[RMDB]
Conditions: 150 mM KOAc, 10 mM MgCl2 and 150 mM bicine (pH 8.5), 24 C.
Chemical mapping of a 207-nucleotide RNA with 2A3.
RNA sequence: GGGAACGACUCGAGUAGAGUCGAAAACUCGCUCAAACAUACAGAGAUGUUGUGCGACAUGAAUCUCUCUGCAUUAGAAUGGUCGAAGAAUCAGCGGCAAUUCGAGACCCAAUUAGAAGCCGCAUUAACAGCUUUGGAACACGCCUUGCUGACGUGACAUAGCGCGUAUCUUCGGAUACGCGCUAUGAAAAGAAACAACAACAACAAC
Reactivity to 2A3 in 0.01 (KOAc 150mM, MgCl2 10mM, bicine 150mM(pH8.5), 24C), signal-to-noise 1, nucleotides 027 to 156: c000u000c000g050c020u020c030a020a140a050c030a000u220a000c090a020g140a000g000a030u000g000u000u000g010u080g020c010g050a000c050a160u130g090a230a230u010c000u000c000u000c000u040g060c050a210u000u070a090g080a300a120u100g000g000u020c000g000a040a010g020a030a060u040c090a050g000c000g000g000c000a000a000u000u000c020g000a060g000a080c000c000c000a230a060u100u140a050g050a300a000g030c000c000g020c010a010u070u020a030a040c010a000g010c080u200u110u180g140g010a020a000c020a000c000g000c000c000u000u100g000c000u020g000a010c040g000u010g010a010